[RMDB]
RNA sequence: GGGAACGACUCGAGUAGAGUCGAAAAGAUCGCAUGUCCGCCGAGGUGGUGGACUCCAAUCCGUACAGCCGCCUGAUGGCCCUGCAGCGGAUGAACAUCGUCAAGGACUACGAGCGCAUUCGCUACAUCAGUGAUAUGCGUUCGCGCAUAUCACUGAAAAAGAAACAACAACAACAAC
Reactivity to DMS in 0.01 (KOAc 150mM, MgCl2 10mM, bicine 150mM(pH8.5), 24C), signal-to-noise 4, nucleotides 027 to 126: g000a060u000c060g000c090a080u010g010u000c000c000g050c050c060g000a160g030g020u010g000g030u000g000g010a050c020u010c180c090a070a080u000c000c050g030u020a180c100a080g010c070c090g010c020c020u020g000a140u010g010g040c010c110c010u000g010c010a050g020c010g010g020a030u010g000a090a080c040a100u000c030g020u000c080a110a130g010g020a130c060u000a050c020g010a030g010c220g010c040a030u000u000c020g010c020u000a050c150a120
Reactivity to 2A3 in 0.01 (KOAc 150mM, MgCl2 10mM, bicine 150mM(pH8.5), 24C), signal-to-noise 2, nucleotides 027 to 126: g010a060u100c060g020c100a050u080g020u020c000c020g000c010c030g070a150g080g140u150g030g020u040g050g000a010c020u000c000c010a020a040u020c010c000g000u050a050c030a030g030c010c000g000c040c030u210g160a230u180g080g000c020c000c030u020g030c000a030g000c010g000g020a000u010g000a010a030c030a100u040c010g050u020c040a040a120g100g000a110c040u040a020c070g020a000g040c040g000c050a020u050u000c000g000c000u030a030c020a180

This 177-nucleotide RNA was probed chemically with DMS and 2A3. For 2A3, 2,241 sequencing reads were counted.